Record summary
Structure probing data (2A3 and DMS) for a 177-nucleotide construct. DMS adducts were read by reverse transcription with MarathonRT. Values cover nucleotides 27 to 126. For 2A3, 1,555 sequencing reads were counted. Source: RMDB library TTRDEL, as collected in RNAgym. For 2A3 the reverse transcriptase was SuperScript II with manganese.

RNA sequence: GGGAACGACUCGAGUAGAGUCGAAAAGAUAUGGAUACAGCUUUGAUCGUGUGGAUCGGAAACGAUCCCACGGGAGCUGAUCCUAAGUCAAAAGUAAGUAAACAGUCUUCGGACUGUUUACUUACAAGAAUACUUGUGCCUUCGGGCACAAGUAUUCAAAAGAAACAACAACAACAAC
Reactivity to 2A3 in 0.01 (KOAc 150mM, MgCl2 10mM, bicine 150mM(pH8.5), 24C), signal-to-noise 1, nucleotides 027 to 126: g030a030u060a040u160g000g010a050u300a290c010a000g000c020u260u170u220g070a110u250c010g010u020g150u300g000g030a000u000c010g030g000a080a090a020c000g000a000u000c000c000c000a000c030g020g000g000a000g000c000u010g000a000u010c000c000u020a060a070g080u030c020a030a030a080a110g000u000a000a000g000u000a030a000a000c000a000g020u000c020u090u250c300g000g000a000c000u000g020u020u000u000a000c000u000u000a000c000a000a000
Reactivity to DMS in 0.01 (KOAc 150mM, MgCl2 10mM, bicine 150mM(pH8.5), 24C), signal-to-noise 1, nucleotides 027 to 126: g000a050u000a300u000g000g010a000u010a150c000a000g040c000u000u000u010g020a040u010c010g020u000g020u010g000g010a010u000c010g000g000a070a130a150c000g000a000u000c000c000c000a000c000g020g010g000a020g040c020u000g000a150u000c000c000u020a020a210g000u040c030a100a090a180a110g000u000a000a000g000u000a000a000a020c000a020g000u000c000u000u000c200g000g000a000c000u010g000u000u000u010a000c000u010u010a000c010a040a000